[RMDB]
RNA sequence: GGGAACGACUCGAGUAGAGUCGAAAAAAUCAAGGGAAGCGUGCCGGUGCAGGCAAGAGACCACCGUAAGCGUCGUUGCGACCAAAUAAGCGCCGAUUCACAUCAGCGCGACUACGCUCUCGCUGCCUAAGCGACGGCUAGUCUGUCAGACCGGGAAGUAUAGGGUUAUCUUCGGAUAACCCUAUACAAAAGAAACAACAACAACAAC
Reactivity to 2A3 in 0.01 (KOAc 150mM, MgCl2 10mM, bicine 150mM(pH8.5), 24C), signal-to-noise 2, nucleotides 027 to 156: a000a000u130c040a040a030g000g000g040a050a020g070c020g030u050g060c130c000g010g030u010g000c040a020g000g000c020a010a010g030a010g000a020c010c020a010c000c020g060u070a040a000g000c010g010u000c000g020u020u030g010c000g020a060c020c070a050a100a090u210a230a040g010c000g000c030c020g040a010u080u160c130a050c000a170u030c000a020g010c010g000c000g020a000c000u010a010c060g000c010u000c000u010c010g000c030u040g060c030c130u130a100a010g000c000g000a020c000g000g000c000u010a000g010u010c060u060g100u090c020a010g040a150c050c040g030g030g040a090a060
Reactivity to DMS in 0.01 (KOAc 150mM, MgCl2 10mM, bicine 150mM(pH8.5), 24C), signal-to-noise 2, nucleotides 027 to 156: a070a110u000c020a100a120g000g000g000a080a080g000c050g020u000g050c020c030g010g000u000g030c050a110g040g000c000a200a020g000a100g000a050c060c020a040c050c010g020u020a040a090g000c080g010u010c030g020u010u000g000c060g000a160c060c050a060a110a100u000a120a250g020c020g060c000c000g010a070u000u020c300a090c050a300u010c010a000g020c050g020c010g020a070c080u000a000c070g040c010u020c090u010c000g000c030u000g000c080c100u020a120a110g040c000g010a010c030g030g000c010u000a020g000u000c000u000g000u000c030a090g000a070c020c020g010g030g030a120a180